Conditions: 150 mM KOAc, 10 mM MgCl2 and 150 mM bicine (pH 8.5), 24 C.
The record gives the reactivity of an RNA of 177 nucleotides to DMS and 2A3.
For 2A3 the reverse transcriptase was SuperScript II with manganese.
The DMS profile rests on 2,108 reads.

RNA sequence: GGGAACGACUCGAGUAGAGUCGAAAAGACUGCCAGGCUUUCGGUACGAAUGAGGAUUUUCCUGUCGUCAACACAUAUUCCUGUGGGAUAUGGAACCGUUACGGAAUAGGCAAACGACCUAUUCCCUCCUCAUAGAUAUCUUCGGAUAUCUAUGAGGAAAAGAAACAACAACAACAAC
Reactivity to DMS in 0.01 (KOAc 150mM, MgCl2 10mM, bicine 150mM(pH8.5), 24C), signal-to-noise 2, nucleotides 027 to 126: g000a130c080u010g000c060c080a150g020g000c090u000u000u000c010g000g020u000a000c020g010a030a020u010g010a000g000g020a140u030u000u020u010c000c000u010g010u000c020g000u000c110a010a100c230a040c000a000u000a010u000u000c000c000u000g000u020g030g010g000a020u000a000u000g000g010a010a020c030c000g030u000u020a040c190g010g000a020a010u000a020g000g030c040a110a100a170c260g000a110c010c000u000a050u000u000c010c000c120u000
Reactivity to 2A3 in 0.01 (KOAc 150mM, MgCl2 10mM, bicine 150mM(pH8.5), 24C), signal-to-noise 5, nucleotides 027 to 126: g020a020c070u080g070c040c010a070g020g090c040u070u070u040c020g000g010u030a010c020g030a030a020u200g090a150g020g030a050u190u080u110u150c000c000u020g030u010c000g000u000c040a070a000c000a010c010a030u010a010u010u080c010c010u120g140u300g110g000g000a010u010a010u040g000g000a000a020c010c000g030u030u060a060c070g000g020a020a030u020a030g000g000c030a160a200a080c130g160a160c000c000u010a010u000u010c000c000c010u000
For DMS the reverse transcriptase was MarathonRT. It was measured as part of the RMDB library RFMREP.